[RMDB]
This 177-nucleotide RNA was probed chemically with 2A3. The reactions ran in a buffer of 150 mM KOAc, 10 mM MgCl2 and 150 mM bicine (pH 8.5), at 24 C.

RNA sequence: GGGAACGACUCGAGUAGAGUCGAAAAAUGCCGCAUUCAGAGACGGUAACUCUAGUGGGCAACUGUCCAUCUAGCGUUGACAUCUACAUACUAUAUAGUAAUACCAAUACUCAAGACUACGAAACGGGGUGAUGGAUGAGUUCGCUCAUCCAUCACCAAAAGAAACAACAACAACAAC
Reactivity to 2A3 in 0.01 (KOAc 150mM, MgCl2 10mM, bicine 150mM(pH8.5), 24C), signal-to-noise 1, nucleotides 027 to 126: a000u160g030c030c030g010c020a020u070u070c020a000g000a000g000a060c000g010g120u100a000a000c000u000c000u100a000g030u000g000g000g000c000a090a010c220u300g060u000c000c000a000u000c000u010a000g060c000g070u000u100g000a000c010a060u000c030u030a030c000a110u130a050c060u030a080u070a050u110a110g020u130a050a050u060a040c000c000a030a010u050a000c000u030c110a140a000g210a110c030u060a030c120g000a000a000a160c070g080g000